RNA sequence: GGGAACGACUCGAGUAGAGUCGAAAAGGACUGGUCCGGCAUCGCCGACACAGCUCCGCCGCCGAGCAGCAACAGCAGGAACGGCAGCGUGGUGAUCUGGGCGUGUUCGGCACUCGUGGUGUAGCCGGUGGUGGCCACGCCGGCGGCGGCGCAGCAGCGUCGAUAAAUUAUUCGUAAUUUAUCGACGAAAAGAAACAACAACAACAAC
Reactivity to 2A3 in 0.01 (KOAc 150mM, MgCl2 10mM, bicine 150mM(pH8.5), 24C), signal-to-noise 3, nucleotides 027 to 156: g080g020a060c070u090g000g040u070c080c030g000g000c050a180u130c180g040c050c010g040a020c040a000c010a100g010c030u010c010c000g000c000c000g000c000c000g020a050g040c040a000g000c010a020a060c010a130g040c010a020g070g090a070a060c030g080g000c000a010g010c040g040u070g000g030u060g060a100u070c040u100g040g000g020c060g040u080g060u090u080c010g020g000c000a010c020u080c070g090u120g050g070u110g030u060a030g010c020c010g030g010u040g030g060u040g020g000c020c000a030c030g000c020c000g010g010c000g000g010c010g000g000c020g000c010a030g030c020a000g030
Reactivity to DMS in 0.01 (KOAc 150mM, MgCl2 10mM, bicine 150mM(pH8.5), 24C), signal-to-noise 2, nucleotides 027 to 156: g030g000a050c040u020g000g020u000c010c020g000g010c050a090u000c100g010c000c000g010a080c030a090c030a160g010c020u000c000c000g030c040c020g030c030c000g000a110g000c030a110g020c030a060a080c040a130g060c040a100g030g020a100a130c040g030g030c020a070g030c040g030u000g010g020u040g000a060u010c020u010g040g050g060c040g040u000g020u000u000c010g000g000c010a020c050u000c060g040u000g000g030u000g000u010a150g000c030c040g020g060u010g000g040u000g010g030c000c020a040c060g010c000c000g000g040c000g000g000c010g010g010c030g030c050a100g030c020a150g000
This 207-nucleotide RNA was probed chemically with 2A3 and DMS. For DMS the reverse transcriptase was MarathonRT. The reactions ran in a buffer of 150 mM KOAc, 10 mM MgCl2 and 150 mM bicine (pH 8.5), at 24 C. Source: RMDB library OK3TST, as collected in RNAgym. For 2A3, 3,258 sequencing reads were counted.